RNA sequence: GGGAACGACUCGAGUAGAGUCGAAAACGAGUAUUUGAUCUCCUAGAGUGGAUAUCCUCUGUAACCGGAGGGCAAAACACAAGAUGAGCGAUUGACGAGCUCGUUCGUUUAACGAAUAGUGUAGGGGCGUCAGCAGUAGGUUCGCCUACUGCUGACGAAAAGAAACAACAACAACAAC
Reactivity to DMS in 0.01 (KOAc 150mM, MgCl2 10mM, bicine 150mM(pH8.5), 24C), signal-to-noise 4, nucleotides 027 to 126: c050g020a080g010u010a100u020u000u000g000a040u010c010u010c000c010u000a090g000a170g000u010g000g000a120u000a180u010c000c000u000c010u000g000u020a110a180c300c070g010g000a000g020g010g000c120a030a070a070a110c020a010c020a130a070g000a070u020g030a030g020c040g000a060u020u010g000a110c170g020a160g010c030u000c000g010u000u000c040g020u000u020u020a080a060c050g000a070a030u030a080g010u000g010u000a020g000g000g000g000
Reactivity to 2A3 in 0.01 (KOAc 150mM, MgCl2 10mM, bicine 150mM(pH8.5), 24C), signal-to-noise 5, nucleotides 027 to 126: c030g010a020g060u110a180u180u130u100g050a070u020c020u000c020c000u040a030g030a030g100u010g000g030a060u020a030u140c010c000u000c000u010g060u080a080a120c060c050g010g000a000g000g030g000c000a040a060a060a000c020a000c000a020a010g060a070u120g020a010g030c010g070a100u010u060g060a070c090g020a040g050c010u000c010g000u030u040c020g010u020u030u160a110a020c040g030a080a100u140a110g070u090g030u070a010g010g000g000g010